[RMDB]
RNA sequence: GGGAACGACUCGAGUAGAGUCGAAAACUCUAUCACAUGCCCAUUGACAGUUGCAGUAAUUGCUGGAGUUGCUGGUGCUCGCAUUCCAGACGUACCUACUACAUUGGCUUGGGUGAACAAUCAGAUAACACAACUAACUUCGGUUAGUUGAAAAGAAACAACAACAACAAC
Reactivity to DMS in 0.01 (KOAc 150mM, MgCl2 10mM, bicine 150mM(pH8.5), 24C), signal-to-noise 9, nucleotides 027 to 129: c000u030c040u030a070u040c010a080c140a070u050g020c000c010c000a020u070u030g030a020c020a000g030u020u010g030c050a020g030u000a050a130u020u040g020c030u020g030g010a030g030u050u030g030c010u050g000g020u080g000c120u040c110g030c000a040u030u030c020c000a040g030a100c110g030u040a040c220c030u000a060c030u030a050c050a040u030u030g030g010c050u010u010g010g010g030u000g000a030a050c160a030a030u070c080a030g040a070u060a080a080c110a100
Reactivity to 2A3 in 0.01 (KOAc 150mM, MgCl2 10mM, bicine 150mM(pH8.5), 24C), signal-to-noise 9, nucleotides 027 to 129: c010u010c030u050a080u110c050a040c030a120u170g010c020c000c010a030u010u080g050a050c030a030g040u060u020g020c020a010g010u080a090a110u120u140g010c000u010g020g020a060g030u080u050g020c060u120g050g250u200g130c100u120c110g000c000a000u020u000c000c010a010g020a070c030g040u030a050c000c010u000a010c010u010a010c010a030u010u020g000g000c000u010u020g020g030g000u050g040a050a050c060a050a090u190c040a010g030a100u140a170a020c090a000